The record gives the reactivity of an RNA of 177 nucleotides to 2A3 and DMS. Values cover nucleotides 27 to 126. Conditions: 150 mM KOAc, 10 mM MgCl2 and 150 mM bicine (pH 8.5), 24 C. Source: RMDB library OK2TST, as collected in RNAgym. 2A3 adducts were read by reverse transcription with SuperScript II with manganese.

RNA sequence: GGGAACGACUCGAGUAGAGUCGAAAAACUAGCCCGUGAUCUCGGCGAAGAACUCGGAGUAGGUGGGCACUUAACCGCGUUACGACGAACACAGGUAGGACCGUUUACGCUCGAUAAUGCUGUAACAAGUACGUAAGGGUUUCGACCCUUACGUACUAAAAGAAACAACAACAACAAC
Reactivity to 2A3 in 0.01 (KOAc 150mM, MgCl2 10mM, bicine 150mM(pH8.5), 24C), signal-to-noise 2, nucleotides 027 to 126: a040c040u060a050g090c000c000c000g000u050g030a090u030c020u020c070g050g000c030g060a070a000g060a080a080c020u010c010g030g060a080g030u020a030g020g050u040g030g080g030c100a020c050u060u080a020a060c020c020g030c000g000u010u030a020c040g030a020c040g000a120a000c060a000c010a030g050g000u080a030g010g120a020c000c000g020u010u060u030a050c030g000c030u030c010g020a030u100a170a040u130g010c030u020g010u080a050a030c040a120
Reactivity to DMS in 0.01 (KOAc 150mM, MgCl2 10mM, bicine 150mM(pH8.5), 24C), signal-to-noise 3, nucleotides 027 to 126: a080c060u010a180g010c030c000c020g020u010g010a090u010c070u000c040g010g000c060g030a150a090g000a050a050c070u000c030g010g000a090g030u000a040g020g020u000g000g000g020c120a080c080u000u000a120a050c030c030g030c060g020u000u000a060c050g010a120c000g010a050a030c100a050c040a030g010g000u020a050g010g020a150c020c040g000u000u000u000a040c050g000c030u010c100g010a070u020a080a080u010g010c030u000g020u020a080a050c260a070